The record gives the reactivity of an RNA of 177 nucleotides to DMS and 2A3. For 2A3, 3,740 sequencing reads were counted. The reactions ran in a buffer of 150 mM KOAc, 10 mM MgCl2 and 150 mM bicine (pH 8.5), at 24 C.
RNA sequence: GGGAACGACUCGAGUAGAGUCGAAAAGAUAUGGAUGGCCCGACAUGUUCGGUGUCGGAAACGACACCGAACAACAGCGGCCAUCCUAAGUCAAACCCAUACAACCCCUUCGGGGGUUGUAUGGGAACUGAUGAUUACAGUUCGCUGUAAUCAUCAGAAAAGAAACAACAACAACAAC
Reactivity to DMS in 0.01 (KOAc 150mM, MgCl2 10mM, bicine 150mM(pH8.5), 24C), signal-to-noise 2, nucleotides 027 to 126: g000a030u010a250u000g000g000a010u010g010g010c020c010c010g030a170c170a060u000g000u000u000c000g030g010u000g010u000c000g030g000a050a060a190c010g010a010c000a010c000c000g010a000a000c000a010a050c110a140g010c140g010g010c000c000a010u000c000c000u010a010a060g000u010c040a130a160a190c000c000c000a000u000a000c000a010a010c000c000c000c020u000u010c210g020g020g010g000g010u020u010g000u000a000u000g000g000g010a010a030
Reactivity to 2A3 in 0.01 (KOAc 150mM, MgCl2 10mM, bicine 150mM(pH8.5), 24C), signal-to-noise 1, nucleotides 027 to 126: g010a000u060a020u100g010g010a000u010g020g000c100c270c000g050a070c080a190u220g030u030u020c020g000g060u010g000u020c020g000g070a070a040a020c000g000a000c010a030c020c010g000a000a000c020a000a000c000a000g070c050g020g000c020c010a000u000c000c000u000a010a010g020u000c010a030a080a140c000c010c000a000u000a000c010a000a020c010c030c010c040u020u100c190g110g020g000g010g030u000u000g010u010a000u000g000g000g010a000a000